[RMDB]
RNA sequence: GGGAACGACUCGAGUAGAGUCGAAAAUUGGGUUUAGCAAAUGAACGUAAUAGCAGUGGUCAUUGUAGUAAAUGUGCAUCAGAAAUGCAUCGCACUGAUCUAUCGUGUGCCUCUACCAUAGUAGCAUUUCACUUUUCUCCUUUUAACCCUACUCAAAAUUGUACGGAGUCUUCGGACUCCGUACAAUAAAAGAAACAACAACAACAAC
Reactivity to 2A3 in 0.01 (KOAc 150mM, MgCl2 10mM, bicine 150mM(pH8.5), 24C), signal-to-noise 3, nucleotides 027 to 156: u050u030g020g000g020u030u030u100a030g050c040a020a030a040u080g030a130a030c050g080u200a050a080u060a190g030c040a020g020u020g000g010u020c020a030u010u060g030u020a030g000u020a030a110a130u160g010u010g000c010a000u020c020a020g100a080a120a040u090g050c040a020u030c060g010c020a000c010u030g030a060u040c020u010a040u080c040g000u020g070u100g080c000c000u020c020u020a060c030c020a040u040a130g050u030a020g040c020a000u030u050u020c040a030c040u040u040u060u000c080u200c020c000u040u060u050u050a040a080c010c000c040u010a020c020u090c120a050a200a080
Reactivity to DMS in 0.01 (KOAc 150mM, MgCl2 10mM, bicine 150mM(pH8.5), 24C), signal-to-noise 1, nucleotides 027 to 156: u010u000g010g060g020u000u010u000a030g060c060a030a060a050u000g020a050a030c030g020u000a170a090u010a120g010c010a050g010u000g000g000u000c030a050u010u000g020u020a110g030u030a050a120a130u000g040u000g000c070a150u000c020a170g000a080a110a110u000g000c050a080u020c120g010c010a000c010u010g010a220u000c030u000a060u000c070g020u000g000u010g020c030c020u010c010u000a010c030c040a110u000a020g020u000a190g020c030a120u000u000u030c110a070c030u000u000u000u000c010u000c010c030u010u010u000u000a000a080c050c030c010u010a070c040u000c030a100a050a100